Overview:
Chemical mapping of a 177-nucleotide RNA with DMS and 2A3. It was measured as part of the RMDB library OK2TST. For 2A3 the reverse transcriptase was SuperScript II with manganese.
RNA sequence: GGGAACGACUCGAGUAGAGUCGAAAAUGGGUAACGCUUUUGGUCUUUUUCACGCUGUUAUUGAGCAUGAAGGAAACUACUGGGAACUACAACAGAUAGCAGGUGAACGUUGUCACAUAAACGUGUCACAUGAGCGUUGGUUCGCCAACGCUCAUGUAAAAGAAACAACAACAACAAC
Reactivity to DMS in 0.01 (KOAc 150mM, MgCl2 10mM, bicine 150mM(pH8.5), 24C), signal-to-noise 2, nucleotides 027 to 126: u000g020g020g020u000a070a060c060g050c040u010u000u010u010g000g000u000c030u000u010u000u000u000c010a030c100g010c010u000g010u000u000a180u020u020g000a070g020c030a050u010g010a040a080g000g000a080a060a050c060u000a080c090u000g020g020g020a060a100c070u000a050c060a050a080c120a080g000a110u010a070g000c030a060g000g000u000g010a080a060c090g000u000u010g000u000c090a080c140a060u020a040a050a030c190g010u000g000u010c030
Reactivity to 2A3 in 0.01 (KOAc 150mM, MgCl2 10mM, bicine 150mM(pH8.5), 24C), signal-to-noise 1, nucleotides 027 to 126: u070g000g000g020u060a010a030c010g050c000u110u110u060u170g030g010u000c050u060u070u010u030u020c030a000c070g070c010u020g020u200u070a160u180u180g090a050g000c050a040u040g070a070a060g100g070a090a000a000c040u140a020c010u100g030g010g120a010a070c050u140a070c050a150a020c000a040g070a080u090a020g040c010a000g070g000u030g030a010a020c020g010u070u000g070u080c050a000c010a170u230a070a140a010c050g000u070g030u000c050